Chemical mapping of a 207-nucleotide RNA with 2A3 and DMS.
DMS adducts were read by reverse transcription with MarathonRT.
Conditions: 150 mM KOAc, 10 mM MgCl2 and 150 mM bicine (pH 8.5), 24 C.
The 2A3 profile rests on 2,528 reads.

[RMDB]
RNA sequence: GGGAACGACUCGAGUAGAGUCGAAAAAUGUGCUGUGACUGGAGAGCAGACCCACACAAUGAGGUUCAUGCGUUUUGUGUUUCCUAGGUAGUCUGCCAUUAGAUUUAUUUUAGCUCUUAUGAUGUGGCAGCACAAUUGGCGCCAGAAAGCGUGCUGACCCCAUACCUUAUUUCGAUAAGGUAUGGGGAAAAGAAACAACAACAACAAC
Reactivity to 2A3 in 0.01 (KOAc 150mM, MgCl2 10mM, bicine 150mM(pH8.5), 24C), signal-to-noise 5, nucleotides 027 to 156: a000u040g000u020g020c000u000g010u020g230a060c050u050g070g020a100g010a020g090c000a000g010a020c000c010c050a010c030a010c010a040a170u140g020a040g100g040u170u160c050a040u160g070c110g080u030u020u070u120g020u000g020u010u090u040c020c020u060a080g010g020u060a030g020u020c010u010g000c000c000a030u050u070a040g010a040u080u130u060a180u080u210u120u110a050g020c010u030c000u040u070a050u220g100a070u150g030u020g070g000c000a000g000c000a000c000a010a000u040u060g030g000c020g010c020c010a050g170a070a100a000g040c060g000u030g050c020u040g030a060
Reactivity to DMS in 0.01 (KOAc 150mM, MgCl2 10mM, bicine 150mM(pH8.5), 24C), signal-to-noise 2, nucleotides 027 to 156: a070u000g020u020g020c010u010g000u020g020a240c010u000g010g000a120g020a120g030c010a110g000a070c020c010c000a160c070a090c110a060a080u010g010a100g040g020u050u020c080a110u000g010c040g000u020u000u000u010g010u000g010u000u000u010c050c040u000a120g030g010u000a070g020u020c020u010g020c010c030a130u000u000a100g030a200u000u000u000a100u020u010u000u010a110g030c090u000c050u020u000a100u020g030a100u010g000u010g010g000c020a010g000c020a030c010a050a100u010u000g010g010c050g010c000c000a170g000a110a100a120g000c000g020u000g020c050u010g010a300